RNA sequence: GGGAACGACUCGAGUAGAGUCGAAAAUAACGUGUGGACCACGAUGUGGUCCUUGAGAGCCGUCGAAGUCUUGAAGGCCUUCUGGCAUGUGGAGCACACGUGUGGUCGGUGGACGGGACUCUCCUAACAUAUCCGUACCAUUCGUGGUACGGAUAUGAAAAGAAACAACAACAACAAC
Reactivity to 2A3 in 0.01 (KOAc 150mM, MgCl2 10mM, bicine 150mM(pH8.5), 24C), signal-to-noise 9, nucleotides 027 to 126: u180a050a040c090g050u100g040u100g110g030a010c010c020a010c100g120a080u300g020u020g040g020u010c000c000u000u010g020a020g000a000g020c020c010g020u050c050g080a120a030g080u040c060u160u280g110a110a050g070g010c010c000u060u040c040u060g130g010c010a020u040g010u030g030g070a110g120c100a020c000a000c120g010u020g010u020g040g040u050c020g000g050u080g070g020a020c000g000g000g050a070c000u000c010u000c020c020u050a060a020
Reactivity to DMS in 0.01 (KOAc 150mM, MgCl2 10mM, bicine 150mM(pH8.5), 24C), signal-to-noise 9, nucleotides 027 to 126: u030a120a070c090g000u020g010u020g000g000a020c000c000a010c000g010a170u050g010u010g010g010u010c000c010u000u010g010a060g010a090g010c030c010g010u000c050g010a090a070g010u010c040u010u020g020a100a300g000g000c020c000u010u010c030u010g010g030c010a030u000g020u000g000g000a160g020c130a110c010a010c030g020u000g010u010g000g020u000c070g010g020u000g000g010a240c020g000g010g000a070c030u000c020u010c010c060u010a080a190